[RMDB]
RNA sequence: GGGAACGACUCGAGUAGAGUCGAAAAUUCUUGUGGUGGCAAGAUCGUUGUGGGUUCCAGAAGAACCCUCAAAUGCGGAUGACAUAAGAGGUGCUUGCAUCGAGGAGUGCACCAAAGAAAAUAAGGCUCCUGGCGACAAGAAGACAUGCGAAGUGUACCAAAAUUAUGGGUUCGCCCAUAAUUUUGGAAAAGAAACAACAACAACAAC
Reactivity to DMS in 0.01 (KOAc 150mM, MgCl2 10mM, bicine 150mM(pH8.5), 24C), signal-to-noise 1, nucleotides 027 to 156: u000u000c000u000u000g040u010g030g020u020g000g000c010a090a090g000a170u000c070g000u000u000g020u000g010g010g020u000u010c010c020a300g000a120a290g000a040a040c040c000c060u000c020a030a030a060u000g030c020g010g050a150u000g020a200c040a090u000a100a100g000a100g030g010u000g010c030u000u000g000c040a040u000c090g020a060g010g010a150g050u000g020c060a030c100c040a040a070a120g000a110a040a060a130u010a030a140g020g010c000u000c000c030u000g020g020c030g010a130c020a010a110g000a070a080g000a050c070a060u000g000c060g020a020a100g030u000g010u010a200
Reactivity to 2A3 in 0.01 (KOAc 150mM, MgCl2 10mM, bicine 150mM(pH8.5), 24C), signal-to-noise 2, nucleotides 027 to 156: u070u010c020u060u060g030u030g040g000u000g040g020c010a050a020g020a110u070c030g000u030u090g030u040g000g000g000u000u040c040c050a050g160a130a020g040a040a060c010c010c000u010c030a030a080a040u130g010c020g050g040a080u070g000a040c050a040u160a090a060g040a020g060g020u030g030c020u070u040g000c010a060u010c030g010a010g040g040a050g020u070g020c080a030c010c000a010a070a020g030a000a060a000a030u120a050a020g010g020c020u000c020c020u020g010g070c010g030a040c030a010a020g040a010a010g020a010c010a030u080g010c020g070a060a000g040u030g020u060a070
Structure probing data (DMS and 2A3) for a 207-nucleotide construct.
Values are in units of 0.01, from 0 to 300, in steps of 10.
The reactions ran in a buffer of 150 mM KOAc, 10 mM MgCl2 and 150 mM bicine (pH 8.5), at 24 C.
The 2A3 profile rests on 1,052 reads.
For DMS, 1,640 sequencing reads were counted.
For 2A3 the reverse transcriptase was SuperScript II with manganese.
Source: RMDB library OK3TST, as collected in RNAgym.
Values cover nucleotides 27 to 156.